[RMDB]
RNA sequence: GGGAACGACUCGAGUAGAGUCGAAAAGAUGAGACUCUAGCUGUACACGAAUAGCUGCGUUUGUUGCAGUACUGACGCUUGUAUACGUGUAUACAAUGUGAAGUUCUGCAACUUCACAAGUCUCAGAGAUAGGUUAGAAGUUCGCUUCUGAUCUAUCAAAAGAAACAACAACAACAAC
Reactivity to 2A3 in 0.01 (KOAc 150mM, MgCl2 10mM, bicine 150mM(pH8.5), 24C), signal-to-noise 9, nucleotides 027 to 126: g100a060u060g000a000g000a000c010u030c070u090a030g010c090u010g010u040a020c050a010c030g060a070a040u040a040g050c010u010g000c010g010u000u010u020g020u010u050g070c060a030g050u050a010c000u010g040a020c000g000c000u030u050g020u010a020u010a010c020g020u020g010u000a000u000a000c030a020a060u110g010u000g010a010a000g000u010u020c040u080g070c060a010a000c000u010u010c010a010c000a000a000g000u000c000u000c000a000g000a000
Reactivity to DMS in 0.01 (KOAc 150mM, MgCl2 10mM, bicine 150mM(pH8.5), 24C), signal-to-noise 9, nucleotides 027 to 126: g020a130u010g000a010g000a010c000u000c240u020a090g020c130u000g010u000a030c080a050c080g000a100a040u010a020g010c030u000g010c040g000u010u000u000g010u000u010g010c200a070g010u010a030c010u000g000a060c100g010c000u010u010g010u000a010u000a030c010g020u010g000u000a010u000a020c020a060a090u030g010u000g000a150a010g010u000u000c140u030g010c190a030a020c000u000u000c010a030c030a090a010g000u000c000u000c000a030g010a120